[RMDB]
RNA sequence: GGGAACGACUCGAGUAGAGUCGAAAAGUAAGUAUAUUCUAUGUACCAGGCAGUUUACCAGGAACUGGAGAAGGCAUGAAGACAGGCAUAUUUUUAAAGAGUUCAUAGGCCAGUGGAGAGAUGGACAUGGGACGCACAGACACAGACCUGAGACAAAGUAAUAGGCCUAUUUCGAUAGGCCUAUUACAAAAGAAACAACAACAACAAC
Reactivity to DMS in 0.01 (KOAc 150mM, MgCl2 10mM, bicine 150mM(pH8.5), 24C), signal-to-noise 2, nucleotides 027 to 156: g020u010a060a140g030u000a080u000a070u000u000c030u000a130u020g020u010a060c010c020a000g030g000c020a080g020u000u000u000a090c040c030a140g010g000a080a130c050u010g030g000a120g000a110a120g000g020c020a090u000g000a090a090g010a050c040a060g010g000c090a080u000a040u000u000u000u030u000a080a130a150g010a170g010u000u000c010a130u000a120g010g040c020c020a160g070u000g010g010a100g010a160g000a060u000g010g000a140c040a120u000g000g020g000a070c070g000c060a040c080a060g020a090c020a060c050a090g000a090c030c030u020g010a130g000a130c060a070a050a210
Reactivity to 2A3 in 0.01 (KOAc 150mM, MgCl2 10mM, bicine 150mM(pH8.5), 24C), signal-to-noise 4, nucleotides 027 to 156: g060u090a050a020g060u040a070u020a030u220u070c050u030a070u100g020u020a060c010c010a000g030g010c020a020g010u050u090u050a050c030c000a020g030g080a070a030c030u020g020g000a050g020a040a020g010g000c050a030u040g020a040a020g040a030c030a020g030g000c030a050u060a110u100u100u020u030u130a080a130a020g050a010g010u010u050c020a030u090a050g040g020c000c040a020g020u040g020g020a050g000a000g000a010u020g000g000a010c020a050u030g000g000g020a000c010g020c020a030c020a040g060a010c020a010c030a090g080a070c040c020u050g020a090g120a060c040a020a040a040